The record gives the reactivity of an RNA of 177 nucleotides to 2A3 and DMS. The reactions ran in a buffer of 150 mM KOAc, 10 mM MgCl2 and 150 mM bicine (pH 8.5), at 24 C. Values cover nucleotides 27 to 126.

RNA sequence: GGGAACGACUCGAGUAGAGUCGAAAAAUCAGAAUCACCAACAAUUUUAGAAGUCAGCUGCACAGUAGCAGACUGCAUUUAUUCUGCAGACUUUGGUGGUUCGCUAACACUACAGUACAAAGCUGACAUCCCUCGUGAAUUUCGAUUCACGAGGGAUAAAAGAAACAACAACAACAAC
Reactivity to 2A3 in 0.01 (KOAc 150mM, MgCl2 10mM, bicine 150mM(pH8.5), 24C), signal-to-noise 1, nucleotides 027 to 126: a000u080c010a010g020a000a000u030c000a010c000c000a020a080c030a170a120u120u170u270u300a020g040a100a000g000u020c010a000g010c000u000g000c010a030c040a120g070u100a030g000c050a020g010a050c000u010g000c010a040u060u080u090a150u210u070c050u020g000c010a030g040a090c020u050u020u120g010g000u000g010g000u020u040c000g000c030u020a040a020c060a030c070u080a060c020a010g020u020a050c030a070a090a010g000c040u000g000a010c000
Reactivity to DMS in 0.01 (KOAc 150mM, MgCl2 10mM, bicine 150mM(pH8.5), 24C), signal-to-noise 2, nucleotides 027 to 126: a100u020c080a180g000a010a020u000c000a020c010c000a060a060c300a100a100u010u000u000u010a070g030a210a090g020u000c010a000g000c000u000g010c060a020c060a130g010u000a000g020c100a050g000a070c000u000g030c010a030u000u010u020a060u030u010c300u000g000c000a020g000a190c130u000u000u010g010g000u000g050g010u020u000c000g000c170u010a070a070c140a060c010u000a020c000a080g050u000a040c100a040a060a080g000c020u000g000a040c040